[RMDB]
RNA sequence: GGGAACGACUCGAGUAGAGUCGAAAACUGGUGGAAGAUCACGGCUACUACGUCCGGCACGUGCUGGUCACCCACGGCCACCGCAACCACUACCAGGGGAUCAAGACGAUUCUCAGGAUCUACGACGUAACACGUUUAGAUUCGUCUAAACGUGUUAAAAAGAAACAACAACAACAAC
Reactivity to DMS in 0.01 (KOAc 150mM, MgCl2 10mM, bicine 150mM(pH8.5), 24C), signal-to-noise 9, nucleotides 027 to 126: c120u010g020g020u000g000g010a140a110g010a090u000c060a070c070g010g010c030u000a100c070u000a070c070g020u000c020c110g010g010c060a090c110g010u000g010c300u000g000g000u000c030a100c040c030c030a090c110g010g000c020c010a070c060c030g010c080a060a110c030c030a080c110u010a100c030c010a070g020g000g010g010a020u000c030a100a130g010a150c200g000a040u000u000c000u000c030a080g020g010a110u000c080u000a090c100g010a080c130g010
Reactivity to 2A3 in 0.01 (KOAc 150mM, MgCl2 10mM, bicine 150mM(pH8.5), 24C), signal-to-noise 8, nucleotides 027 to 126: c040u060g030g010u040g040g040a130a050g020a110u100c040a030c070g020g010c020u060a070c010u040a030c100g050u030c030c020g030g000c050a060c220g050u070g000c050u040g000g030u030c030a060c010c020c010a030c050g020g010c010c010a030c020c000g000c020a030a060c020c010a040c040u080a100c010c010a030g000g000g020g000a010u020c030a050a080g300a180c140g010a030u040u000c010u000c010a020g050g010a050u030c040u120a070c070g070a010c030g040

An RNA of 177 nucleotides, treated with DMS and 2A3 and read out base by base. Conditions: 150 mM KOAc, 10 mM MgCl2 and 150 mM bicine (pH 8.5), 24 C. For DMS, 15,873 sequencing reads were counted.